[RMDB]
Structure probing data (2A3 and DMS) for a 207-nucleotide construct. High 2A3 reactivity points to a flexible backbone, as in loops and unpaired stretches.
RNA sequence: GGGAACGACUCGAGUAGAGUCGAAAACGCAGCAGUGCUACUGUAAUACGCUCAACAUCGGUUGAGCGUAUUACAGUGGCACUGAUCCAUUAGGGAUCUCCUUUCUAUCGCAUGUUAAGUGUUAACUUAACGUGCGAUAGGAAGGAGCUGCCAAUGGCGAACCUAGAAAGUUCGCUUUCUAGGUUCGAAAAGAAACAACAACAACAAC
Reactivity to 2A3 in 0.01 (KOAc 150mM, MgCl2 10mM, bicine 150mM(pH8.5), 24C), signal-to-noise 1, nucleotides 027 to 156: c060g030c020a020g000c000a000g010u000g000c000u000a000c000u000g000u000a000a000u000a000c000g000c000u010c000a010a010c000a190u300c160g220g000u000u000g010a000g040c010g000u000a000u000u000a000c000a000g010u000g000g000c000a000c000u000g000a000u000c000c000a060u120u020a060g070g010g010a010u010c000u000c000c000u000u000u010c000u000a000u000c000g000c000a000u000g000u000u000a020a000g010u030g050u200u170a080a020c010u000u010a000a000c000g000u000g010c000g000a000u000a000g000g000a000a000g010g000a000g000c000u000g000c000c000a010a000u010g030g020
Reactivity to DMS in 0.01 (KOAc 150mM, MgCl2 10mM, bicine 150mM(pH8.5), 24C), signal-to-noise 1, nucleotides 027 to 156: c080g010c020a030g010c000a010g000u000g020c010u000a010c010u000g000u000a010a010u000a020c010g010c000u000c010a010a020c020a300u010c250g050g000u000u020g000a020g020c010g000u000a000u000u000a000c000a000g020u000g000g020c000a000c010u010g000a000u000c000c000a300u000u000a140g020g030g000a010u000c000u000c000c000u000u000u000c000u000a000u000c000g020c000a000u000g010u010u000a000a010g030u000g030u010u010a080a070c000u000u000a000a000c010g030u000g000c000g000a000u000a000g000g000a000a000g000g000a000g000c000u000g000c000c000a000a010u000g000g000
DMS adducts were read by reverse transcription with MarathonRT. Source: RMDB library OK3TST, as collected in RNAgym.